[RMDB]
Structure probing data (DMS) for a 177-nucleotide construct. The DMS profile rests on 759 reads. Source: RMDB library OK2TRN, as collected in RNAgym.
RNA sequence: GGGAACGACUCGAGUAGAGUCGAAAACAACUAGAUGACCAGUACCCCUUUGUGCCGCCCAAGAUGCGGUUCAGAAGCAAGGUGUGGCACCCCAACGUGAGCAGCGCCAAUGGGGCGAUCUGUUUGGAUCACGUAAGGCGUUCGCGCCUUACGUGAUAAAAGAAACAACAACAACAAC
Reactivity to DMS in 0.01 (KOAc 150mM, MgCl2 10mM, bicine 150mM(pH8.5), 24C), signal-to-noise 1, nucleotides 027 to 126: c040a080a120c080u000a140g060a100u000g020a070c010c000a100g000u000a070c040c000c070c000u010u010u010g010u010g020c010c020g050c000c110c100a090a130g010a090u000g020c010g000g000u000u000c100a030g000a050a080g020c080a080a040g010g020u000g030u000g000g020c000a170c010c020c000c010a030a120c040g010u010g000a050g040c000a020g000c010g010c010c010a120a130u010g000g020g020g100c070g010a070u000c010u000g000u000u000u010g010g010